[RMDB]
RNA sequence: GGGAACGACUCGAGUAGAGUCGAAAAAUAAAUACCCAUAGGGGACCAUAGAAGGAGCGUUGUCGUCGCGGUCCCUGUCAGGCUCGUCCUGUGAAUCCUUCUAAAAUAAAAUCUGCCUUACAAAAAAGAUACACUGUUAGUUCGCUAACAGUGUAUCAAAAGAAACAACAACAACAAC
Reactivity to DMS in 0.01 (KOAc 150mM, MgCl2 10mM, bicine 150mM(pH8.5), 24C), signal-to-noise 1, nucleotides 027 to 126: a080u000a090a120a080u010a100c010c030c000a140u020a070g000g000g030g000a020c000c030a230u020a020g000a010a010g000g000a020g000c030g020u000u010g020u020c160g020u010c010g010c000g020g000u000c000c010c010u020g020u010c010a000g000g020c010u020c280g000u020c020c000u010g000u000g020a020a050u000c000c010u000u000c000u020a060a090a100a130u010a060a030a080a110u010c080u030g000c090c040u000u000a040c090a000a040a100a070a120a080
Reactivity to 2A3 in 0.01 (KOAc 150mM, MgCl2 10mM, bicine 150mM(pH8.5), 24C), signal-to-noise 3, nucleotides 027 to 126: a000u120a000a070a020u130a120c010c000c000a020u130a060g020g010g010g000a010c000c000a020u020a040g010a000a000g020g000a010g000c000g010u060u140g180u170c120g070u080c000g010c000g030g000u000c000c000c000u000g000u000c010a000g000g000c030u100c260g150u140c030c000u000g000u010g040a020a000u010c000c010u010u000c000u000a010a060a010a040u110a010a110a000a050u050c050u110g110c020c020u070u120a040c090a000a220a000a030a020a010